RNA sequence: GGGAACGACUCGAGUAGAGUCGAAAACUUUUUCUUCCUUUCCUCUACCCACUGCUCGAGGGCCUCCUCCCUCGCCUUCGAGCCGGGUCUUGCAUCGGGUUGGCUCAUCCUGAGACCGGGGAGCUUCGCGCAGUGUCCUUCGGGACACUGAAAAGAAACAACAACAACAAC
Reactivity to 2A3 in 0.01 (KOAc 150mM, MgCl2 10mM, bicine 150mM(pH8.5), 24C), signal-to-noise 5, nucleotides 027 to 129: c020u060u070u040u100u060c020u020u050c040c000u020u030u030c010c000u050c010u040a070c020c000c030a090c120u130g000c000u010c010g000a030g010g010g010c000c040u120c010c010u040c000c010c000u030c020g000c010c000u020u020c010g020a010g000c000c000g000g010g000u020c020u030u110g000c000a050u010c010g020g000g000u030u040g020g000c000u010c030a110u050c020c050u060g030a040g010a070c010c030g000g000g000g020a050g000c020u070u090c060g050c020g000
Reactivity to DMS in 0.01 (KOAc 150mM, MgCl2 10mM, bicine 150mM(pH8.5), 24C), signal-to-noise 6, nucleotides 027 to 129: c060u000u000u000u000u000c030u010u020c090c000u030u020u020c020c020u020c060u010a090c000c030c020a170c170u030g030c030u020c020g020a040g010g040g040c030c100u040c040c020u040c010c020c010u030c190g040c030c010u040u000c040g000a060g060c010c130g000g000g000u010c030u020u010g040c000a060u000c040g020g000g020u030u010g010g050c050u000c060a080u000c030c040u050g000a110g020a080c070c030g020g010g010g010a010g020c090u040u010c030g060c090g000
The record gives the reactivity of an RNA of 170 nucleotides to 2A3 and DMS. The DMS profile rests on 28,443 reads. It was measured as part of the RMDB library 15KLIB. Reactivities are given for positions 27 through 129. 2A3 adducts were read by reverse transcription with SuperScript II with manganese.